[RMDB]
RNA sequence: GGGAACGACUCGAGUAGAGUCGAAAAGAUAUGGAAUGACCAAUGGAGAUCCGAUUCGGAAACGAAUCGAGAUCUAUGAAGUUGGCCAUUCCUAAGUCAAAGCUACGACAGUUCGCUGUCGUAGCAACAAAUGCUAUAGCUUCGGCUAUAGCAUUUGAAAAGAAACAACAACAACAAC
Reactivity to DMS in 0.01 (KOAc 150mM, MgCl2 10mM, bicine 150mM(pH8.5), 24C), signal-to-noise 5, nucleotides 027 to 126: g000a020u000a220u000g000g010a020a000u000g000a000c000c000a010a000u000g020g050a100g020a010u000c000c010g000a000u000u000c000g020g000a070a050a100c010g010a010a000u000c000g000a110g020a000u000c000u000a100u020g010a110a300g000u000u000g000g000c000c000a010u000u000c000c000u000a000a070g000u010c030a110a130a190g010c000u000a000c000g000a000c010a010g000u010u020c300g030c010u000g000u000c010g010u000a000g000c010a030a040
Reactivity to 2A3 in 0.01 (KOAc 150mM, MgCl2 10mM, bicine 150mM(pH8.5), 24C), signal-to-noise 4, nucleotides 027 to 126: g000a000u040a010u070g000g010a000a000u010g000a020c000c020a000a010u130g170g090a300g000a080u010c000c010g000a010u010u000c000g000g000a040a010a010c000g000a000a020u000c000g010a040g010a030u000c010u020a150u160g100a040a010g000u000u010g000g010c000c010a000u000u000c000c000u000a020a000g000u000c030a110a140a090g000c010u000a000c000g010a000c010a020g040u090u150c260g080c240u000g000u000c000g010u000a000g030c000a000a000